[RMDB]
RNA sequence: GGGAACGACUCGAGUAGAGUCGAAAAUAGACAUUAGUUUCCAAGCGGAAGAAACUGUGUGUUCAUUUUAUGGAUUUUCGUGUUGUACGAUUUUUUUCAGUUGCGUUAGCAACUACGUGCCCACAAUGAUUGAAUAUGCGUUCGCGCAUAUUCAAUCAAAAGAAACAACAACAACAAC
Reactivity to 2A3 in 0.01 (KOAc 150mM, MgCl2 10mM, bicine 150mM(pH8.5), 24C), signal-to-noise 4, nucleotides 027 to 126: u080a010g040a000c030a040u150u120a000g000u000u000u000c020c010a060a060g110c090g060g100a120a050g040a010a050a000c000u000g020u010g000u000g030u170u040c040a050u020u040u040u080a130u140g200g000a100u020u040u020u100c020g000u030g040u150u250g100u080a030c030g000a050u040u080u010u010u020u050u130c080a000g000u020u000g000c000g080u150u170a020g010c000a000a000c000u010a010c020g030u050g030c010c010c000a010c040a000a090u130
Reactivity to DMS in 0.01 (KOAc 150mM, MgCl2 10mM, bicine 150mM(pH8.5), 24C), signal-to-noise 3, nucleotides 027 to 126: u020a070g000a030c010a030u000u000a050g020u000u000u000c000c030a140a200g040c210g030g020a180a090g000a010a000a010c000u000g000u010g020u000g000u020u000c060a030u010u010u040u000a090u030g000g020a080u030u000u000u030c030g020u000g040u010u000g000u010a050c040g000a020u020u000u000u000u010u010u000c110a050g000u000u020g010c000g010u030u050a100g000c010a000a000c000u000a040c090g000u020g000c000c020c010a050c180a090a140u010

Chemical mapping of a 177-nucleotide RNA with 2A3 and DMS. Values cover nucleotides 27 to 126. The RNA was probed in 150 mM KOAc, 10 mM MgCl2 and 150 mM bicine (pH 8.5) at 24 C. For DMS the reverse transcriptase was MarathonRT.